About this RNA
The record gives the reactivity of an RNA of 177 nucleotides to 2A3 and DMS. The reactions ran in a buffer of 150 mM KOAc, 10 mM MgCl2 and 150 mM bicine (pH 8.5), at 24 C.

RNA sequence: GGGAACGACUCGAGUAGAGUCGAAAAGAGCGGGAUACAACACCCACCGAACCCUUCUUGAAGAUAUUGCCCGGCAUGAUGCCGAUCUUGCAUUCUUCAGGGGUCAGGAUGCCGGGGCAGUUGGGGAAUAUAGUAAUGGUUUCGACCAUUACUAUAUAAAAGAAACAACAACAACAAC
Reactivity to 2A3 in 0.01 (KOAc 150mM, MgCl2 10mM, bicine 150mM(pH8.5), 24C), signal-to-noise 6, nucleotides 027 to 126: g050a000g010c070g000g030g020a050u110a200c040a050a010c020a090c020c020c010a020c010c010g030a050a060c020c000c000u050u060c040u060u130g060a060a020g020a060u100a060u180u130g010c000c020c000g000g010c030a050u180g080a100u170g170c030c020g020a030u010c030u040u100g010c010a070u100u030c020u060u030c020a010g010g000g020g000u010c010a010g010g020a030u050g010c030c030g030g000g020g030c030a010g000u070u060g010g010g010g030a030
Reactivity to DMS in 0.01 (KOAc 150mM, MgCl2 10mM, bicine 150mM(pH8.5), 24C), signal-to-noise 9, nucleotides 027 to 126: g010a130g040c070g010g010g010a140u010a090c140a080a100c130a110c010c010c010a100c040c030g010a180a140c020c000c010u000u010c090u000u000g010a070a060g000a050u010a040u000u000g010c010c240c000g000g010c000a090u010g000a120u010g020c020c010g000a020u000c060u010u000g010c070a070u010u000c060u000u000c050a070g000g000g000g010u000c070a110g000g000a070u000g010c080c060g010g010g010g020c040a030g010u000u000g000g000g010g000a160